[RMDB]
RNA sequence: GGGAACGACUCGAGUAGAGUCGAAAAUGAUAGGCUUUCGAGCCUAUCAACUGCGUAGCUGCGUUAAAAUUUUAGCUACGCUUAAUAAAAAUAUUUAACGCAAAUAUAAGGUCUUCGGACCUUAUAACUAAGAUGCUGAAUUCGUUCAGCAUCUUAGAAAAGAAACAACAACAACAAC
Reactivity to DMS in 0.01 (KOAc 150mM, MgCl2 10mM, bicine 150mM(pH8.5), 24C), signal-to-noise 1, nucleotides 027 to 126: u010g000a020u000a020g030g010c000u000u000u010c170g000a040g010c000c000u000a000u000c010a000a140c040u030g020c000g040u000a000g020c000u000g020c010g000u000u000a020a020a120a200u010u050u010u010a050g010c010u010a000c010g000c000u000u000a010a030u020a020a060a050a040a040u010a060u010u000u000a000a000c000g000c010a140a120a180u000a020u010a000a020g010g000u000c000u000u000c180g040g000a010c000c000u000u000a000u000a030a140
Reactivity to 2A3 in 0.01 (KOAc 150mM, MgCl2 10mM, bicine 150mM(pH8.5), 24C), signal-to-noise 2, nucleotides 027 to 126: u070g010a000u000a010g000g010c010u000u060u160c300g070a010g000c000c000u010a000u000c000a000a000c000u020g020c000g000u000a010g020c010u040g000c030g010u020u030a060a040a140a300u160u260u120u270a000g000c010u000a000c000g000c000u020u100a080a010u080a000a010a000a010a010u130a030u050u100u050a010a020c010g000c000a000a120a030u090a020u000a030a000g000g000u000c000u000u100c230g020g020a010c000c000u000u000a010u010a010a000
An RNA of 177 nucleotides, treated with DMS and 2A3 and read out base by base. Reactivities are given for positions 27 through 126.